[RMDB]
RNA sequence: GGGAACGACUCGAGUAGAGUCGAAAAGAUAUGGAUCGGCCCAGGGAGCUCAGUGUCGGAAACGACAUGGGAGCGAGGAUCUGGGCGAUCCUAAGUCAAAAGUGUACUCACUUCGGUGAGUACACAAGUCGUCAAUAUACUUCGGUAUAUUGACGACAAAAGAAACAACAACAACAAC
Reactivity to DMS in 0.01 (KOAc 150mM, MgCl2 10mM, bicine 150mM(pH8.5), 24C), signal-to-noise 2, nucleotides 027 to 126: g000a010u000a060u020g000g000a000u000c000g010g000c000c000c000a030g000g000g000a010g040c000u010c000a300g010u000g000u000c000g010g010a030a010a060c000g020a010c000a010u010g000g060g000a010g020c000g000a050g020g010a060u000c010u000g000g010g010c010g010a000u010c000c000u000a000a060g000u000c020a050a090a140a170g020u000g000u000a000c000u000c000a020c000u000u020c230g010g010u000g000a020g000u000a000c000a000c000a040a080
Reactivity to 2A3 in 0.01 (KOAc 150mM, MgCl2 10mM, bicine 150mM(pH8.5), 24C), signal-to-noise 2, nucleotides 027 to 126: g000a000u010a010u060g000g020a000u010c010g300g000c030c010c000a000g030g000g010a060g000c000u000c030a050g000u000g000u000c010g020g000a030a030a010c010g010a010c020a010u100g070g300g020a000g020c020g010a160g040g000a040u000c000u000g000g000g000c000g000a000u000c000c000u000a020a000g010u010c020a020a040a130a160g020u010g000u000a010c010u000c010a010c000u050u040c150g150g010u010g020a000g000u000a010c000a000c010a010a010

Source: RMDB library TTRDES, as collected in RNAgym.
Structure probing data (DMS and 2A3) for a 177-nucleotide construct.
For 2A3 the reverse transcriptase was SuperScript II with manganese.
DMS adducts were read by reverse transcription with MarathonRT.
High DMS reactivity at an A or C suggests that its Watson-Crick edge is free.